[RMDB]
RNA sequence: GGGAACGACUCGAGUAGAGUCGAAAAUCAUGUUUAUUCGUAAACAUGAAACGCCGCACGGCGCGCCUGGCCACCAGGGAACGUCGAUAUGGAAGCCUGAGAAUGAGGUGCCGUUCGCGGCACCUAAUUAAACUAGAGGGUUCGCCCUCUAGUUUAAAAAAGAAACAACAACAACAAC
Reactivity to DMS in 0.01 (KOAc 150mM, MgCl2 10mM, bicine 150mM(pH8.5), 24C), signal-to-noise 2, nucleotides 027 to 126: u000c000a000u000g000u010u000u000a000u000u000c160g020u000a000a030a010c010a000u010g000a010a150a150c170g030c020c020g000c180a090c030g000g000c010g020c270g010c020c020u000g000g010c110c060a110c070c020a080g010g020g000a090a070c050g000u000c030g000a130u010a070u000g020g000a060a110g000c010c020u000g000a150g010a120a130u010g010a000g030g020u010g010c020c010g060u000u000c150g020c010g040g000c000a010c000c010u000a010a070